[RMDB]
RNA sequence: GGGAACGACUCGAGUAGAGUCGAAAACACAGUGACCAUUCAAGCUGAUUGUGACACUGUGUAGGGUAGGUACUGAUUGGUUCUUCAAUCAGUAGAUGGGAAGAAAAUGCCAUAGGACUGGUAUUGUACUUUCAAUCCACUUCGGUGGAUUGAAAGUAAAAGAAACAACAACAACAAC
Reactivity to DMS in 0.01 (KOAc 150mM, MgCl2 10mM, bicine 150mM(pH8.5), 24C), signal-to-noise 2, nucleotides 027 to 126: c000a010c000a040g020u000g020a090c050c000a030u000u000c010a150a170g020c300u020g010a030u000u000g020u010g040a210c010a000c000u000g020u000g010u000a120g000g000g000u010a070g050g010u020a000c000u000g010a000u000u000g010g010u020u000c240u020u010c000a000a000u000c000a020g020u000a000g000a100u000g000g000g000a100a120g020a060a100a030a040u000g000c000c010a050u000a170g010g020a240c190u000g000g010u000a010u000u000g000u010
About this RNA
The data come from the RNA Mapping Database (RMDB), library RFMREP. This 177-nucleotide RNA was probed chemically with DMS. The reactions ran in a buffer of 150 mM KOAc, 10 mM MgCl2 and 150 mM bicine (pH 8.5), at 24 C. Reactivities are given for positions 27 through 126.